[RMDB]
An RNA of 207 nucleotides, treated with DMS and 2A3 and read out base by base.
The RNA was probed in 150 mM KOAc, 10 mM MgCl2 and 150 mM bicine (pH 8.5) at 24 C.
The DMS profile rests on 4,357 reads.
2A3 adducts were read by reverse transcription with SuperScript II with manganese.
RNA sequence: GGGAACGACUCGAGUAGAGUCGAAAACACAAUUCUCUAAGCGAUGAGAAGCGUGUGGAAAAUUAGGGAAGGGUUACGGCUAUAAUCCUAAGAAAGCUUAUCUACAAGCGGAGGUAUUCUCAGAACGAAAACCAUUUGGCGUUCGCGCCAAAUGGAACACACUGAAUACGUUCGCGUAUUCAGUGUGAAAAGAAACAACAACAACAAC
Reactivity to DMS in 0.01 (KOAc 150mM, MgCl2 10mM, bicine 150mM(pH8.5), 24C), signal-to-noise 3, nucleotides 027 to 156: c000a020c010a080a170u000u000c000u000c000u020a080a190g030c130g020a240u000g000a050g000a040a050g010c220g040u000g030u000g010g000a060a060a120a130u000u000a110g000g000g000a140a090g000g010g020u000u000a060c130g000g000c050u020a300u030a060a020u000c030c000u000a070a130g020a060a090a120g000c020u000u000a070u010c070u010a120c110a030a070g000c110g000g000a060g030g030u000a110u000u000c020u010c040a120g000a070a090c040g010a100a060a070a190c000c010a040u000u000u010g000g020c000g060u000u000c280g030c020g010c010c000a000a000a000u010g020g000a000a130
Reactivity to 2A3 in 0.01 (KOAc 150mM, MgCl2 10mM, bicine 150mM(pH8.5), 24C), signal-to-noise 5, nucleotides 027 to 156: c010a000c000a010a050u030u000c000u000c020u090a190a130g170c080g150a110u110g010a040g010a040a020g010c050g030u020g000u110g010g010a070a120a050a050u110u080a070g010g010g040a050a050g070g010g030u030u120a030c060g030g000c010u010a020u040a180a060u080c020c040u030a040a020g060a050a070a000g010c000u040u040a040u160c060u100a070c060a120a000g000c030g040g030a010g030g020u070a120u120u050c070u020c030a030g040a090a030c070g080a060a040a020a040c000c000a000u000u000u000g000g010c010g020u030u050c220g000c000g000c050c000a000a000a000u000g000g000a000a000